[RMDB]
Annotation:
An RNA of 177 nucleotides, treated with DMS and 2A3 and read out base by base. The RNA was probed in 150 mM KOAc, 10 mM MgCl2 and 150 mM bicine (pH 8.5) at 24 C. DMS (dimethyl sulfate) methylates the pairing face of unpaired adenines and cytosines. Reactivities are given for positions 27 through 126. It was measured as part of the RMDB library M2PK50.

RNA sequence: GGGAACGACUCGAGUAGAGUCGAAAAUCGCUAAGCUUCGGCUUAGCGAAAAGACGCGGCUUGAGGGCGUGUACGGCUGCGCACACACACGACCCUCAAGCCAAAGCAUCGUGUUCGCACGAUGCAAGCCCAGUACUAAGUUCGCUUAGUACUGGGCAAAAGAAACAACAACAACAAC
Reactivity to DMS in 0.01 (KOAc 150mM, MgCl2 10mM, bicine 150mM(pH8.5), 24C), signal-to-noise 2, nucleotides 027 to 126: u000c000g020c000u010a000a010g000c000u000u020c180g020g010c000u000u010a000g000c000g010a010a030a050a100g010a070c230g000c260g020g000c000u010u010g030a010g000g000g000c020g020u000g000u000a070c070g010g020c100u000g020c190g010c050a080c080a110c070a040c010a000c000g000a170c000c000c010u000c000a000a000g010c000c000a020a020a030g000c000a010u000c000g030u000g010u000u030c240g010c000a010c010g020a010u000g000c000a070a060
Reactivity to 2A3 in 0.01 (KOAc 150mM, MgCl2 10mM, bicine 150mM(pH8.5), 24C), signal-to-noise 3, nucleotides 027 to 126: u030c000g020c000u000a010a000g000c000u030u170c300g090g000c010u000u010a000g030c000g000a000a000a000a000g020a010c070g010c100g070g000c000u000u000g000a010g020g000g000c020g000u000g010u000a030c040g060g000c050u200g120c120g050c050a040c010a010c000a000c010a010c110g300a300c010c000c000u000c000a000a000g000c000c000a000a000a000g000c000a000u000c000g000u000g020u020u040c250g000c090a010c010g000a000u000g000c000a000a010